[RMDB]
RNA sequence: GGGAACGACUCGAGUAGAGUCGAAAAGGAACUCGCGACGUCGUUGCGUGCGUACGGGCCGCCGUCGCAGCAGAUGGUGGCCGAGCUGGCGAAGGCGCGGCAGGCCUCGUCGAAGCUCGGCGCCGCGCACAGCUCGGUUGUUCGCAACCGAGCUGUGAAAAGAAACAACAACAACAAC
Reactivity to 2A3 in 0.01 (KOAc 150mM, MgCl2 10mM, bicine 150mM(pH8.5), 24C), signal-to-noise 2, nucleotides 027 to 126: g080g010a090a040c020u010c070g020c000g020a030c050g010u040c020g020u070u110g110c040g050u100g040c040g080u190a090c060g000g080g050c030c020g050c020c000g020u020c000g000c010a010g000c010a020g050a170u220g050g010u010g160g020c000c010g000a000g000c040u030g010g000c020g110a230a090g060g000c200g010c060g300g000c110a070g050g020c000c000u010c020g000u000c030g090a190a000g000c020u030c010g000g000c010g000c000c010g010c040g030
Reactivity to DMS in 0.01 (KOAc 150mM, MgCl2 10mM, bicine 150mM(pH8.5), 24C), signal-to-noise 2, nucleotides 027 to 126: g010g020a090a120c040u000c080g020c030g000a040c080g000u000c070g000u000u000g010c040g000u000g010c180g010u000a050c110g000g010g010c110c090g010c040c010g010u010c000g000c060a080g010c130a130g010a070u010g030g030u000g020g000c030c010g000a000g010c010u000g010g000c000g010a150a050g010g010c020g040c060g010g010c140a100g010g030c010c000u000c000g000u010c020g010a120a080g000c000u000c000g020g000c010g000c000c000g000c140g020
Notes: Conditions: 150 mM KOAc, 10 mM MgCl2 and 150 mM bicine (pH 8.5), 24 C. An RNA of 177 nucleotides, treated with 2A3 and DMS and read out base by base. For DMS the reverse transcriptase was MarathonRT. It was measured as part of the RMDB library OK2TST. 2A3 adducts were read by reverse transcription with SuperScript II with manganese.